[RMDB]
RNA sequence: GGGAACGACUCGAGUAGAGUCGAAAAGAUGAAGAAAGAGCUCAGCUGAUGCUUCUGCAAACCAAGGAAUACCAAAGACUGCCAGGAAGCCCCAGAAGUGUAGGGAGAGGCAUUUCCUCACAGCCCUCACAAGGUAUCAGCCCUUAGGACACCUUGCAACGCAAGGACAUUUCGAUGUCCUUGCGUUAAAAGAAACAACAACAACAAC
Reactivity to DMS in 0.01 (KOAc 150mM, MgCl2 10mM, bicine 150mM(pH8.5), 24C), signal-to-noise 1, nucleotides 027 to 156: g030a120u010g000a100a100g000a040a070a140g000a110g000c030u000c070a110g000c040u020g040a050u010g000c040u030u000c080u000g030c030a090a070a180c140c060a090a170g010g030a060a130u000a180c010c020a110a110a090g010a080c030u000g040c090c040a060g030g000a070a140g000c150c000c040c030a120g000a120a080g000u010g020u000a080g010g040g020a180g010a090g010g030c130a080u000u030u000c030c050u030c020a050c000a090g040c010c000c060u000c050a010c040a030a060g020g050u010a110u000c030a060g010c090c030c050u020u010a080g010g010a100c020a080c020c010u000u000g000c030
Reactivity to 2A3 in 0.01 (KOAc 150mM, MgCl2 10mM, bicine 150mM(pH8.5), 24C), signal-to-noise 1, nucleotides 027 to 156: g050a000u070g020a040a030g020a060a070a070g100a020g000c030u060c130a030g000c010u090g010a060u080g060c000u060u000c010u030g000c100a100a130a080c050c020a030a000g050g000a050a110u050a090c000c060a030a020a000g030a060c050u050g010c030c010a000g000g000a030a000g020c090c010c000c000a000g020a170a000g080u080g030u210a040g000g000g030a070g000a020g010g000c020a130u110u090u050c010c010u000c000a040c020a050g040c020c000c030u030c000a070c000a010a010g060g010u080a130u130c040a040g000c010c010c000u000u030a030g000g000a000c000a060c050c020u050u010g010c080
The record gives the reactivity of an RNA of 207 nucleotides to DMS and 2A3. For 2A3 the reverse transcriptase was SuperScript II with manganese. Reactivities are rounded to 0.1 and cut off at 0 and 3. The reactions ran in a buffer of 150 mM KOAc, 10 mM MgCl2 and 150 mM bicine (pH 8.5), at 24 C.